RNA sequence: GGGAACGACUCGAGUAGAGUCGAAAACGGAAAACGGUGCGGGAGUAGAUCCAAAAUCUCUUCAAUAUGCAGAGUAUGAGUGUCAGUAGUCAAAAUACUCUUCCUGUCUAAAAAACUGAUGCUAUCAGAGCAUACCUAUCUUCGGAUAGGUAUGCUCAAAAGAAACAACAACAACAAC
Reactivity to 2A3 in 0.01 (KOAc 150mM, MgCl2 10mM, bicine 150mM(pH8.5), 24C), signal-to-noise 1, nucleotides 027 to 126: c000g060g010a010a000a070a020c100g020g000u040g000c050g010g010g000a020g000u100a010g000a040u000c040c040a020a170a110a170u010c050u010c000u130u060c020a070a140u110a090u300g030c050a000g100a010g050u110a040u210g100a050g010u000g020u020c010a000g010u040a000g080u060c040a000a000a130a130u060a110c020u070c000u060u040c040c000u020g080u050c100u070a220a300a010a030a010a050c020u020g030a000u060g110c020u080a080u180c040a060
Reactivity to DMS in 0.01 (KOAc 150mM, MgCl2 10mM, bicine 150mM(pH8.5), 24C), signal-to-noise 1, nucleotides 027 to 126: c040g000g000a060a040a030a080c120g010g010u000g010c060g000g030g000a050g040u010a040g000a040u010c030c140a050a090a100a100u000c010u010c010u010u000c060a150a040u010a060u010g030c070a060g000a080g000u010a040u000g010a130g020u010g010u000c030a000g000u000a060g000u020c120a080a040a040a030u000a030c070u000c020u000u000c010c040u000g030u030c120u020a000a060a090a080a070a050c040u000g000a040u000g010c060u000a080u010c090a130

An RNA of 177 nucleotides, treated with 2A3 and DMS and read out base by base. The DMS profile rests on 843 reads. For 2A3, 744 sequencing reads were counted.